[RMDB]
RNA sequence: GGGAACGACUCGAGUAGAGUCGAAAAUACGUCAACAGUUCGGGCGCUAAGUCGUAUCUCGGGCUGACCAAUUCACAUACACUUGGCGACAAUAUUGGCGCUUUAACUGGUCUUCCAGAACACACGCCGAUCUGCUGAUGUUCGCAUCAGCAGAUCGAAAAGAAACAACAACAACAAC
Reactivity to DMS in 0.01 (KOAc 150mM, MgCl2 10mM, bicine 150mM(pH8.5), 24C), signal-to-noise 2, nucleotides 027 to 126: u010a050c120g000u010c030a060a170c020a000g000u010u000c080g060g030g020c000g020c020u000a030a080g000u010c110g030u000a110u010c080u000c050g020g020g000c090u000g030a080c120c040a070a130u040u000c130a120c270a090u030a120c060a070c070u000u000g000g000c040g000a050c070a040a130u000a190u020u000g000g000c000g030c060u000u000u000a070a030c030u000g000g010u000c110u000u010c020c000a020g000a070a060c110a090c180a050c140g020c090
Reactivity to 2A3 in 0.01 (KOAc 150mM, MgCl2 10mM, bicine 150mM(pH8.5), 24C), signal-to-noise 1, nucleotides 027 to 126: u030a020c030g000u020c000a030a010c010a110g000u010u010c010g060g000g000c030g050c090u070a100a010g060u080c050g030u080a270u050c060u030c000g000g000g020c030u020g010a060c000c020a030a040u270u130c060a040c020a060u170a110c050a030c090u020u050g040g000c020g030a020c050a090a120u250a100u090u060g010g010c040g040c030u070u110u070a020a010c000u010g000g000u010c050u050u070c000c010a060g050a230a040c040a020c010a020c080g050c040
Chemical mapping of a 177-nucleotide RNA with DMS and 2A3. Values cover nucleotides 27 to 126. It was measured as part of the RMDB library OK2TST.